[RMDB]
RNA sequence: GGGAACGACUCGAGUAGAGUCGAAAAAGGCGAUGCGCGGAAUCAUCGUCGUCAGACCAGCCGGGAACGACAACGUAACGGAUCCAGACCUUCACAUUUUUCUUUGAUAAAUACUGCGCGAAUUCCAGCCUCGAGUACGUUUCGACGUACUCGAGGCAAAAGAAACAACAACAACAAC
Reactivity to 2A3 in 0.01 (KOAc 150mM, MgCl2 10mM, bicine 150mM(pH8.5), 24C), signal-to-noise 2, nucleotides 027 to 126: a000g040g000c060g030a000u000g000c060g020c060g000g060a000a060u090c010a000u000c000g010u000c050g030u010c010a000g050a070c030c000a050g000c030c000g010g060g080a050a050c010g080a030c060a140a010c080g020u080a020a020c030g030g000a030u070c000c040a020g090a100c020c000u080u100c070a110c080a300u000u080u080u130u000c140u110u130u180g060a050u070a160a220a040u110a010c060u020g010c040g000c000g010a050a090u050u060c010c000a000